[RMDB]
The record gives the reactivity of an RNA of 177 nucleotides to 2A3 and DMS. Values cover nucleotides 27 to 126. The RNA was probed in 150 mM KOAc, 10 mM MgCl2 and 150 mM bicine (pH 8.5) at 24 C. For DMS the reverse transcriptase was MarathonRT. The data come from the RNA Mapping Database (RMDB), library TTRDEL. The DMS profile rests on 10,138 reads.
RNA sequence: GGGAACGACUCGAGUAGAGUCGAAAAGAUAUGGAUCGCCAGUACGCGAAGAACUCGGAAACGAGGGAGCGUCUGGGCGAUCCUAAGUCAAAACUUAUCCUGGAUUCUUCGGAAUCCAGGAUAAGAACAUUGUAAUUUCGUUCGCGAAAUUACAAUGAAAAGAAACAACAACAACAAC
Reactivity to 2A3 in 0.01 (KOAc 150mM, MgCl2 10mM, bicine 150mM(pH8.5), 24C), signal-to-noise 5, nucleotides 027 to 126: g030a010u090a050u190g000g000a000u010c000g000c000c000a020g100u300a030c000g060c010g200a300a080g020a090a030c000u000c010g020g040a070a060a060c000g000a000g010g000g010a010g000c010g020u030c010u080g030g050g000c000g000a000u010c000c000u000a010a010g020u010c020a020a010a110a160c010u000u000a010u000c000c000u000g010g000a000u000u010c010u040u150c300g080g000a000a000u000c000c000a000g010g000a000u000a000a000g000a010a000
Reactivity to DMS in 0.01 (KOAc 150mM, MgCl2 10mM, bicine 150mM(pH8.5), 24C), signal-to-noise 6, nucleotides 027 to 126: g010a050u010a300u000g010g010a010u000c000g010c010c000a020g010u010a000c010g030c000g000a090a170g000a110a220c000u000c000g000g000a110a130a210c010g000a020g010g000g000a080g020c000g010u000c010u000g010g010g020c000g000a000u000c000c000u000a010a070g000u010c030a100a080a100a160c000u000u000a000u000c000c000u000g000g000a010u000u000c000u000u010c210g030g000a010a000u000c000c000a000g000g000a000u000a000a000g000a100a150